Conditions: 150 mM KOAc, 10 mM MgCl2 and 150 mM bicine (pH 8.5), 24 C. Chemical mapping of a 177-nucleotide RNA with DMS and 2A3. Source: RMDB library OK1LIB, as collected in RNAgym. DMS adducts were read by reverse transcription with MarathonRT. 2A3 adducts were read by reverse transcription with SuperScript II with manganese.
RNA sequence: GGGAACGACUCGAGUAGAGUCGAAAACGCCGUCGAAAGCGCUCGCCGAUUUCGUUCGCUGCCGGGAUCUGACGUGUCGCUGGCCCGGCUGUGAUGAGCCCGCCACCAAUUGCGACCUGGAUCAUACCCCAGUAUGCUUCUUCGGAAGCAUACUGGGAAAAGAAACAACAACAACAAC
Reactivity to DMS in 0.01 (KOAc 150mM, MgCl2 10mM, bicine 150mM(pH8.5), 24C), signal-to-noise 1, nucleotides 027 to 126: c110g000c020c020g080u080c060g030a010a090a190g050c040g100c000u000c000g000c120c000g030a040u000u030u020c060g060u000u000c080g010c000u000g050c100c000g060g000g030a030u100c030u000g030a290c000g040u080g020u060c050g010c010u000g000g000c000c010c050g000g000c010u000g080u010g000a060u010g010a100g000c000c030c030g000c070c060a100c000c010a060a080u020u050g120c010g020a100c100c000u000g000g030a180u000c000a030u000a300c240
Reactivity to 2A3 in 0.01 (KOAc 150mM, MgCl2 10mM, bicine 150mM(pH8.5), 24C), signal-to-noise 3, nucleotides 027 to 126: c050g010c020c020g020u040c010g060a200a050a020g050c030g000c010u020c000g000c000c030g050a090u020u070u100c060g000u000u070c000g040c030u020g040c010c000g020g010g000a130u060c020u070g090a140c030g130u180g050u080c110g000c060u030g000g010c000c090c000g000g000c010u050g020u030g010a200u050g000a040g030c050c010c000g030c030c000a050c020c010a070a080u080u060g020c020g010a050c000c020u000g060g000a040u030c010a040u100a160c000